[RMDB]
RNA sequence: GGGAACGACUCGAGUAGAGUCGAAAAGGUCGGUUGUGUUAGGCAUAUUGCCCGAUGCACUUACACACGCUUGACCCACCAGCUUCGGCAAAUACAUUAAGAGGUACUGAGAACGAGGCGUACCGAAGCCUGACCAUAACUUCGGUUAUGGUCAGGCAAAAGAAACAACAACAACAAC
Reactivity to DMS in 0.01 (KOAc 150mM, MgCl2 10mM, bicine 150mM(pH8.5), 24C), signal-to-noise 1, nucleotides 027 to 126: g000g000u000c010g000g110u000u000g000u000g030u060u000a050g000g010c030a000u000a120u070u000g000c070c000c080g000a010u000g040c000a130c010u000u010a010c120a000c000a010c180g010c010u000u110g010a000c020c040c040a260c080c150a130g000c020u000u000c000g000g040c050a070a010a070u010a000c080a040u070u020a010a110g040a300g020g050u000a010c120u010g040a240g010a080a100c040g030a090g030g000c010g000u000a040c010c080g010a120a120
Reactivity to 2A3 in 0.01 (KOAc 150mM, MgCl2 10mM, bicine 150mM(pH8.5), 24C), signal-to-noise 2, nucleotides 027 to 126: g020g080u090c060g000g050u010u050g000u000g000u050u000a000g000g010c010a000u040a050u160u190g090c030c050c000g010a000u010g000c050a050c270u030u020a010c020a000c010a000c080g030c100u300u300g010a000c000c010c020a030c040c020a020g010c000u020u030c010g000g000c010a030a050a040u230a050c190a090u190u160a110a060g080a070g080g010u000a060c060u050g070a030g050a150a000c020g020a040g040g000c020g020u040a020c000c070g050a010a000